[RMDB]
RNA sequence: GGGAACGACUCGAGUAGAGUCGAAAAUGCUACUAUUGGUGUAUGUAAGUACACUGAUAUUGAUGUUAAUUCAGCUUUGAAUAUAUGUUUUGACAUACGCGAUAAUUGUUCAUUGGAGAAGUUCAUGGAAGAUCUGUCUUCGGACAGAUCAAAAGAAACAACAACAACAAC
Reactivity to DMS in 0.01 (KOAc 150mM, MgCl2 10mM, bicine 150mM(pH8.5), 24C), signal-to-noise 2, nucleotides 027 to 129: u020g040c070u000a100c000u010a020u000u000g000g050u000g000u020a000u040g000u080a090a120g030u000a050c020a050c020u050g030a030u030a000u000u050g010a040u060g000u000u060a000a000u000u000c000a060g000c190u000u000u000g020a020a010u000a120u040a000u000g000u000u000u000u000g000a020c050a090u020a030c070g020c000g000a120u000a090a090u010u010g050u020u000c060a130u080u020g030g020a130g000a050a160g000u050u030c040a080u060g000g000a160a100
Reactivity to 2A3 in 0.01 (KOAc 150mM, MgCl2 10mM, bicine 150mM(pH8.5), 24C), signal-to-noise 6, nucleotides 027 to 129: u140g010c010u010a100c010u010a020u000u000g000g010u000g000u020a000u030g230u140a110a100g010u000a000c000a000c000u000g020a030u020a030u000u150g080a130u050g020u150u150a090a020u070u000c020a040g060c160u170u160u270g070a100a000u180a030u030a050u200g050u050u080u040u070g020a010c010a020u050a030c060g010c000g070a060u050a160a100u080u030g010u020u030c070a080u020u100g050g040a140g000a150a070g030u120u100c060a100u100g080g030a100a050
This 170-nucleotide RNA was probed chemically with DMS and 2A3. For DMS, 20,716 sequencing reads were counted. High 2A3 reactivity points to a flexible backbone, as in loops and unpaired stretches. DMS adducts were read by reverse transcription with MarathonRT. The data come from the RNA Mapping Database (RMDB), library 15KLIB. The 2A3 profile rests on 7,481 reads.